[RMDB]
RNA sequence: GGGAACGACUCGAGUAGAGUCGAAAAAGGGACACCUCACUGACAUUUUACCAACAGAGUGAGAGUGAGGUUAACCUCUCAUUUCUGUUGGUGAACGCAGAAGUUAGAGGUUGAGAACACUGACAACUGCGUUCAUAGUUGUCAGUGUUCUGUCCCAGCAUCAUUAUAGUUUCGACUAUAAUGAUGCAAAAGAAACAACAACAACAAC
Reactivity to 2A3 in 0.01 (KOAc 150mM, MgCl2 10mM, bicine 150mM(pH8.5), 24C), signal-to-noise 9, nucleotides 027 to 156: a000g000g000g000a010c010a010c010c000u010c010a030c010u030g110a100c050a110u060u040u020u060a010c000c000a010a000c000a010g010a000g000u000g000a010g020a000g020u160g050a130g130g050u070u100a050a040c030c000u000c000u000c000a040u150u300u030c000u000g000u000u010g010g000u020g000a010a000c010g000c040a030g000a180a020g080u060u180a040g010a000g020g000u030u120g020a030g010a010a000c000a000c000u000g000a000c000a000a000c010u040g050c060g250u220u210c080a070u210a040g000u000u010g000u000c000a000g000u000g000u000u000c000u000g000u000c000c000c000a000
Reactivity to DMS in 0.01 (KOAc 150mM, MgCl2 10mM, bicine 150mM(pH8.5), 24C), signal-to-noise 3, nucleotides 027 to 156: a080g010g000g020a100c040a090c010c010u000c000a120c020u000g020a200c040a070u000u000u000u000a130c020c000a010a050c030a040g010a070g020u010g010a050g010a040g010u010g010a120g030g020u010u010a080a150c170c010u000c010u000c020a010u000u010u010c000u000g030u000u000g030g020u000g010a010a020c100g010c040a040g000a090a130g000u000u000a080g010a020g040g020u000u000g000a100g000a030a030c000a020c010u000g000a030c010a010a060c010u000g040c180g000u010u000c130a110u000a010g000u010u000g010u000c000a020g020u010g000u000u000c010u000g010u000c020c000c010a230